[RMDB]
RNA sequence: GGGAACGACUCGAGUAGAGUCGAAAAGGAUGUUGACCGGGAUGUCGACAUUGAGGAACGCGGCAGGUCGCUCGAUGGUGAUGGUGUAGUUGGCCGCCAGCAGGCCCUGCCGGUCGGCGCGCCAGAGAGGCAAUAAGGGUUUCGACCCUUAUUGCCUAAAAGAAACAACAACAACAAC
Reactivity to 2A3 in 0.01 (KOAc 150mM, MgCl2 10mM, bicine 150mM(pH8.5), 24C), signal-to-noise 2, nucleotides 027 to 126: g040g020a050u010g010u010u020g010a010c020c020g170g050g070a040u130g030u040c040g000a050c020a080u020u090g090a160g120g050a150a020c030g000c000g000g000c000a010g000g000u090c060g030c020u100c020g100a080u010g020g030u070g040a190u180g060g030u020g000u010a160g000u130u070g000g000c040c000g000c040c000a000g030c000a000g020g110c060c030c000u050g000c030c010g000g000u000c000g010g020c040g000c040g010c010c040a130g040a000g000
Reactivity to DMS in 0.01 (KOAc 150mM, MgCl2 10mM, bicine 150mM(pH8.5), 24C), signal-to-noise 2, nucleotides 027 to 126: g030g000a020u000g020u000u000g000a010c070c070g000g000g010a060u010g060u000c020g000a070c070a050u000u020g040a090g000g020a080a070c060g000c020g000g000c030a040g000g050u000c100g040c020u020c060g040a110u010g000g000u020g000a070u040g010g030u000g000u030a060g040u000u000g040g030c030c010g030c040c010a020g000c090a080g000g050c030c010c050u020g020c100c040g000g000u000c040g000g000c040g010c100g000c000c010a100g000a110g000